[RMDB]
RNA sequence: GGGAACGACUCGAGUAGAGUCGAAAAUGCCAGCGCGCGCGCCCGCCGGUACCGCCGCCGCCCCACCGCCGGGCGACUGGCAACGUAAGGAGCAGCUGGGCGCCACGUCCGGUGCAGCCACCUGGCGAGUCCAUUAAGUGUUCGCACUUAAUGGACUAAAAGAAACAACAACAACAAC
Reactivity to 2A3 in 0.01 (KOAc 150mM, MgCl2 10mM, bicine 150mM(pH8.5), 24C), signal-to-noise 4, nucleotides 027 to 126: u110g020c000c000a020g020c040g010c030g000c010g010c010g010c080c000c000g030c000c000g030g040u040a080c020c050g010c000c010g000c010c020g000c000c010c000c010a150c010c070g090c050c040g000g000g030c010g010a040c040u080g020g000c010a040a030c050g030u050a100a040g060g050a060g030c040a000g030c090u150g000g020g020c000g000c000c020a040c010g030u010c000c010g040g000u050g020c030a010g050c050c000a070c010c000u030g030g020c000g020
Reactivity to DMS in 0.01 (KOAc 150mM, MgCl2 10mM, bicine 150mM(pH8.5), 24C), signal-to-noise 3, nucleotides 027 to 126: u060g000c000c000a060g020c140g060c040g000c230g020c030g000c010c030c020g040c100c050g000g040u020a060c050c090g000c030c020g000c000c030g030c000c000c000c070a150c040c140g000c090c100g070g000g010c000g030a060c040u020g010g000c000a060a130c200g000u080a110a150g050g000a150g000c080a120g000c040u030g030g010g000c090g000c050c040a080c050g010u010c000c020g050g000u000g000c120a110g020c090c030a110c070c030u000g000g000c010g000

Structure probing data (2A3 and DMS) for a 177-nucleotide construct.
For 2A3, 4,239 sequencing reads were counted.
2A3 is a SHAPE reagent: it acylates the 2'-hydroxyl of flexible nucleotides of all four kinds.
For DMS the reverse transcriptase was MarathonRT.
It was measured as part of the RMDB library OK1LIB.